RNA sequence: GGGAACGACUCGAGUAGAGUCGAAAACGGUCUCGACGGGGGUCGCCGAGGGCGUGGCUGCGCGCCGAGGUGCGGGUGGCCUCGUAAAAACCCGCAACGGCAUAACUGCCAACACCAACUACGCUCUCGCGGCUUAAUGACCGCGACCUCGCCCGGUGUUACUACAGACGUUCGCGUCUGUAGUAACAAAAGAAACAACAACAACAAC
Reactivity to 2A3 in 0.01 (KOAc 150mM, MgCl2 10mM, bicine 150mM(pH8.5), 24C), signal-to-noise 2, nucleotides 027 to 156: c090g020g020u020c040u060c160g090a080c020g020g020g010g000g010u030c030g070c170c100g000a000g000g000g000c000g010u010g050g000c090u100g000c130g000c040g020c100c010g020a030g000g070u010g000c000g010g000g010u010g030g030c000c040u030c020g020u010a060a000a000a020a000c010c000c030g000c030a100a050c040g010g000c010a040u110a300a140c040u170g010c010c010a010a010c020a020c010c010a030a070c010u030a000c000g000c000u000c010u000c000g010c000g000g010c000u010u040a110a060u220g090a030c000c000g000c000g020a000c010c000u020c050g000c020c000c000g040g020u050